[RMDB]
RNA sequence: GGGAACGACUCGAGUAGAGUCGAAAAGAAGGUGGGUCAGGGCUCGGACCGCACCGAUUAGAUGUAACUAUUUCGAGCCCAUUAAUGGCGUUUUCGCCUAGGUCAGAGCACGCCGUGGCUCGACCAAAAUAAAUAAAUAAUAGCACGGCGGAUAGAAGAUAGUAGUGACCUUCGGGUCACUACUAUCAAAAGAAACAACAACAACAAC
Reactivity to 2A3 in 0.01 (KOAc 150mM, MgCl2 10mM, bicine 150mM(pH8.5), 24C), signal-to-noise 1, nucleotides 027 to 156: g120a060a060g010g000u040g030g000g000u000c050a020g010g040g010c000u000c000g000g000a000c000c000g090c040a010c000c000g000a000u030u190a070g040a040u040g020u210a110a200c080u060a160u030u280u070c000g000a010g010c000c000c000a000u040u200a040a050u040g000g000c050g030u060u060u140u270c070g050c000c000u000a030g000g000u000c060a050g000a000g010c000a000c010g060c000c020g000u030g000g000c000u000c000g000a000c000c000a040a040a040a040u150a000a010a000u080a010a000a000u050a010a010u110a010g030c000a000c020g000g000c050g000g030a000u080a010g080a120a000
An RNA of 207 nucleotides, treated with 2A3 and read out base by base. Reactivities are rounded to 0.1 and cut off at 0 and 3. The 2A3 profile rests on 818 reads. For 2A3 the reverse transcriptase was SuperScript II with manganese.